This 207-nucleotide RNA was probed chemically with 2A3 and DMS. Values cover nucleotides 27 to 156. For 2A3, 742 sequencing reads were counted. It was measured as part of the RMDB library OK3TST. For DMS, 2,475 sequencing reads were counted.
RNA sequence: GGGAACGACUCGAGUAGAGUCGAAAAAGUAUUCGGCAAAUACGAGGGCUUUGACGGCUCACCGGCCGCGCAAGGUCGCUUACAAUAUCAUAUGUGGGGCGUUGCAACGCCCGCAAUGUCGACGGCGCCAAUGCAUGGAUAUGACGACUUUAAGUUGCAUGCAAGUCUGAUUCGUCAGACUUGCAUGAAAAGAAACAACAACAACAAC
Reactivity to 2A3 in 0.01 (KOAc 150mM, MgCl2 10mM, bicine 150mM(pH8.5), 24C), signal-to-noise 1, nucleotides 027 to 156: a000g080u040a040u030u110c020g000g000c040a140a000a090u080a080c120g000a040g030g000g000c000u000u020u000g010a000c030g000g010c100u050c070a110c000c050g110g000c010c000g050c090g000c030a010a000g040g000u030c010g040c120u000u060a040c000a020a040u020a030u210c030a020u020a070u230g020u040g040g050g020g040c000g000u030u130g070c120a170a080c090g000c000c020c000g010c010a040a050u140g050u120c090g000a190c030g010g000c000g000c030c000a020a120u110g000c030a050u000g000g000a000u000a000u130g030a060c090g000a010c040u000u120u030a150a070g010u020u000g060
Reactivity to DMS in 0.01 (KOAc 150mM, MgCl2 10mM, bicine 150mM(pH8.5), 24C), signal-to-noise 1, nucleotides 027 to 156: a130g040u010a070u020u000c000g040g020c090a160a190a080u010a060c010g010a120g030g000g030c000u020u010u000g030a160c010g010g020c030u010c000a170c300c080g000g000c000c000g000c080g020c060a030a040g010g020u000c030g060c020u000u000a000c090a090a090u000a060u010c040a060u010a000u000g030u000g000g010g020g000c000g140u000u020g000c080a050a070c000g030c030c020c030g030c040a030a100u020g000u000c050g000a050c040g000g010c060g000c000c000a000a050u030g040c020a050u010g000g000a040u000a050u000g030a090c020g000a030c030u010u000u000a120a120g030u000u000g000